[RMDB]
RNA sequence: GGGAACGACUCGAGUAGAGUCGAAAAGUGGUCGUCGCGGCGAUGCUGCUGCGGAUCGAGCGGCUGCGCAACGACUACCGGGUGCUGCUCGGCGCGCUGAUCACCAUCACCGUGCUGGACCGGAUCGUGCGGUUGGACGAUCGCUCGCUGGUCAACGCUCUUACAGGCCGUUCGCGGCCUGUAAGAGAAAAGAAACAACAACAACAAC
Reactivity to 2A3 in 0.01 (KOAc 150mM, MgCl2 10mM, bicine 150mM(pH8.5), 24C), signal-to-noise 1, nucleotides 027 to 156: g000u000g040g000u010c000g030u040c010g020c010g090g180c060g050a120u250g040c090u000g030c020u030g160c020g160g070a170u070c070g000a010g000c010g120g040c050u200g040c020g000c020a140a000c030g030a000c010u100a170c010c000g060g000g080u100g030c120u020g000c010u010c010g110g000c020g000c000g080c050u100g000a020u000c040a000c020c000a100u080c000a020c000c060g030u040g040c080u230g040g020a060c080c070g070g050a020u120c020g020u030g000c000g000g050u010u070g060g080a080c170g000a020u000c000g000c040u000c020g010c050u070g010g030u020c010a030a030c030g000